Structure probing data (DMS and 2A3) for a 207-nucleotide construct. It was measured as part of the RMDB library OK3TST. Reactivities are given for positions 27 through 156. For 2A3 the reverse transcriptase was SuperScript II with manganese. For 2A3, 6,131 sequencing reads were counted.

RNA sequence: GGGAACGACUCGAGUAGAGUCGAAAAGUGUUAUUAAGUGUUUGCCUGGUGUCACUGUCUCCAUUUCCUCCGCUGUCAAGGAUGAGAUUAUCCUUGAGGGUAACUCUUUGGAAAACGUUUCUCAAUCCGCUGCCAACAUUAAGCAAAUUUGCAAUGACCCUAGUAAAUGAUUCGUCAUUUACUAGGGAAAAGAAACAACAACAACAAC
Reactivity to DMS in 0.01 (KOAc 150mM, MgCl2 10mM, bicine 150mM(pH8.5), 24C), signal-to-noise 3, nucleotides 027 to 156: g020u000g000u000u010a070u000u000a070a120g020u020g010u000u000u000g000c010c030u010g020g010u000g010u000c040a080c050u000g010u000c020u010c010c040a150u000u000u000c010c000u000c040c050g030c040u000g010u000c020a060a050g000g010a070u010g010a160g020a160u000u010a060u000c010c010u000u000g020a070g020g010g000u000a050a060c040u000c020u000u000u000g020g000a090a050a080a110c110g000u000u000u000c010u000c030a080a130u000c020c010g030c050u000g020c010c030a050a070c060a070u000u000a050a100g010c060a040a050a150u000u010u000g020c060a080a120u000g000a300
Reactivity to 2A3 in 0.01 (KOAc 150mM, MgCl2 10mM, bicine 150mM(pH8.5), 24C), signal-to-noise 8, nucleotides 027 to 156: g050u060g050u090u100a120u130u190a130a040g040u040g030u080u070u070g050c020c030u020g040g000u040g030u070c030a030c060u040g030u050c020u010c050c000a050u050u070u030c010c010u030c030c030g020c030u080g050u200c020a020a020g020g010a000u050g040a040g040a130u090u180a020u090c000c000u010u030g030a040g010g030g000u030a050a030c020u010c020u140u120u090g030g020a050a030a020a030c040g030u010u050u030c040u010c000a050a110u000c020c040g030c040u050g010c020c010a080a050c030a120u080u130a070a030g030c020a030a100a190u170u190u140g020c030a050a040u170g080a100